Chemical mapping of a 207-nucleotide RNA with DMS and 2A3. The reactions ran in a buffer of 150 mM KOAc, 10 mM MgCl2 and 150 mM bicine (pH 8.5), at 24 C.
[RMDB]
RNA sequence: GGGAACGACUCGAGUAGAGUCGAAAAACGGUGCGGACGUUCGCGCUUCCGUGAAACGCGAAAAUCGGACGGUGGCUGCAAGUCGCAUCGCAAAACCGCGGCAAGUGGAGUUAGCGAGAGGAGGCUGAAACCAUCCAACACUUCGGUGUUGGAUGAACUUUAUGACACUAUUCGUAGUGUCAUAAAGAAAAGAAACAACAACAACAAC
Reactivity to DMS in 0.01 (KOAc 150mM, MgCl2 10mM, bicine 150mM(pH8.5), 24C), signal-to-noise 3, nucleotides 027 to 156: a030c010g030g030u000g010c020g010g010a030c030g020u000u000c070g020c020g020c010u000u000c010c080g000u000g000a060a030a020c010g000c010g000a060a050a090a060u010c030g020g020a090c050g020g000u000g010g030c020u000g030c040a090a110g020u000c010g010c020a100u040c020g000c010a060a040a100a100c040c030g030c050g020g020c070a060a090g020u000g020g000a110g010u000u000a060g020c090g000a070g020a100g050g010a070g020g000c070u000g000a090a080a110c080c000a020u010c000c000a010a010c000a010c000u000u000c300g060g020u000g020u010u010g000g000a000u000g010a000a050
Reactivity to 2A3 in 0.01 (KOAc 150mM, MgCl2 10mM, bicine 150mM(pH8.5), 24C), signal-to-noise 5, nucleotides 027 to 156: a010c020g000g000u020g020c050g090g100a080c010g120u110u070c070g030c010g000c040u050u010c010c020g020u080g080a160a120a040c090g020c040g100a060a040a010a130u200c020g040g000a010c030g010g010u010g060g000c110u170g000c100a060a030g010u030c000g000c010a020u020c010g020c000a080a100a010a010c010c030g020c020g030g000c080a060a050g030u070g070g020a060g020u060u090a030g040c030g030a010g000a010g040g010a010g020g000c030u030g010a070a020a020c030c000a000u000c000c000a000a000c000a000c010u040u090c220g080g000u000g000u000u000g010g000a000u000g000a000a000
As a SHAPE reagent, 2A3 marks flexible, mostly unpaired nucleotides at the ribose 2'-OH.